Chemical mapping of a 207-nucleotide RNA with 2A3. Source: RMDB library M2RFPK, as collected in RNAgym. The 2A3 profile rests on 1,661 reads.

[RMDB]
RNA sequence: GGGAACGACUCGAGUAGAGUCGAAAAAAACUUUUGUGACUUGCUGAAACGGGACUAAUCUCCUCACCGAGGUUAAGCAAGUAAAAUACGCCUCUCAUAUCCUUACCUGAGGGUGGUAAGGAAAUAACCUGCAACGCUUCCUUCGGGAAGCGUUGAACACACAACGUGGAUUCGUCCACGUUGUGUGAAAAGAAACAACAACAACAAC
Reactivity to 2A3 in 0.01 (KOAc 150mM, MgCl2 10mM, bicine 150mM(pH8.5), 24C), signal-to-noise 2, nucleotides 027 to 156: a000a000a000c120u180u070u060u130g130u070g050a020c010u000u000g000c000u010g020a080a120a090c020g000g000g010a020c010u040a160a080u050c030u010c050c010u020c020a060c000c090g020a020g050g000u060u090a040a000g000c010a000a000g010u040a010a030a010a000u090a020c080g040c020c010u040c000u000c030a080u030a030u200c000c000u000u010a000c000c000u040g060a080g010g060g010u020g000g010u000a000a000g010g000a010a010a010u040a010a030c060c060u070g050c050a020a000c000g000c010u020u010c000c000u020u060c170g060g000g000a000a000g000c010g000u000u000g000a000a000
The reactions ran in a buffer of 150 mM KOAc, 10 mM MgCl2 and 150 mM bicine (pH 8.5), at 24 C.